[RMDB]
RNA sequence: GGGAACGACUCGAGUAGAGUCGAAAAGGUGCAGAGAGAAAAAAGAGCAGUGGGAAUAGGAGCUGUACUCCUUGGGUUCUUGGGAGCAGCAGGAAGCACUAUGGGCGCAGCGUCAUUGACGCUGACGCGAGCCAACAUCUUUCGAGAUGUUGGCUCGAAAAGAAACAACAACAACAAC
Reactivity to 2A3 in 0.01 (KOAc 150mM, MgCl2 10mM, bicine 150mM(pH8.5), 24C), signal-to-noise 6, nucleotides 027 to 126: g070g000u050g000c030a020g020a000g040a010g050a110a080a020a030a050a010g060a020g000c060a020g030u080g020g040g050a050a030u080a110g040g030a030g000c020u040g030u100a090c010u010c000c000u050u050g090g030g000u090u040c020u050u080g010g000g000a030g020c020a010g010c000a000g060g030a050a020g030c020a010c090u080a120u170g110g020g010c010g000c000a000g000c000g000u000c040a240u050u300g000a010c000g010c010u010g020a020c010g000
Reactivity to DMS in 0.01 (KOAc 150mM, MgCl2 10mM, bicine 150mM(pH8.5), 24C), signal-to-noise 5, nucleotides 027 to 126: g010g010u000g010c040a060g010a100g000a080g020a010a060a080a070a080a050g000a060g030c040a050g020u000g000g000g010a070a100u020a040g020g000a070g010c090u000g000u020a200c040u000c000c020u000u010g000g010g010u000u010c050u000u000g000g010g010a080g010c070a050g000c060a090g010g000a090a090g010c050a050c070u010a070u010g010g010g010c010g000c010a020g010c010g010u000c020a200u020u030g010a010c010g010c010u000g000a020c020g000